RNA sequence: GGGAACGACUCGAGUAGAGUCGAAAAGAAGAGAAGCGCGCGAAUUGGAAACCAGCGAACCCUAUUACGCGCGCAAGGAACCGGGCCUUGGUUCUUUGGAAAGAAUAGAUAAUUUCGCUGGUAAAGAGGUAUACCAUAUAUUCGUAUAUGGUAUACCAAAAGAAACAACAACAACAAC
Reactivity to 2A3 in 0.01 (KOAc 150mM, MgCl2 10mM, bicine 150mM(pH8.5), 24C), signal-to-noise 9, nucleotides 027 to 126: g080a050a020g090a010g030a140a020g020c000g000c000g000c000g030a020a040u060u040g050g030a090a070a110c010c010a010g000c000g010a020a040c020c000c000u010a020u020u070a080c010g000c000g000c000g000c010a000a000g010g000a000a000c010c000g040g210g070c050c080u120u160g030g000u000u000c000u010u010u030g060g040a150a100a030g060a090a050u110a100g100a070u130a130a070u080u060u050c010g000c000u000g000g000u030a020a060a010g100a020
Reactivity to DMS in 0.01 (KOAc 150mM, MgCl2 10mM, bicine 150mM(pH8.5), 24C), signal-to-noise 4, nucleotides 027 to 126: g010a200a140g020a190g010a150a150g020c020g000c010g010c020g020a090a080u010u020g000g000a110a120a070c000c010a000g010c000g010a020a060c210c060c030u000a030u010u000a170c010g000c000g030c010g000c000a020a010g000g000a030a030c000c000g020g000g020c100c060u030u030g000g000u000u000c000u000u010u010g000g010a090a070a090g010a060a040u020a040g010a090u010a080a080u010u000u010c000g010c000u000g000g010u030a060a090a060g010a160
Structure probing data (2A3 and DMS) for a 177-nucleotide construct. As a SHAPE reagent, 2A3 marks flexible, mostly unpaired nucleotides at the ribose 2'-OH. The RNA was probed in 150 mM KOAc, 10 mM MgCl2 and 150 mM bicine (pH 8.5) at 24 C. The data come from the RNA Mapping Database (RMDB), library OK1LIB. For DMS, 10,261 sequencing reads were counted. 2A3 adducts were read by reverse transcription with SuperScript II with manganese.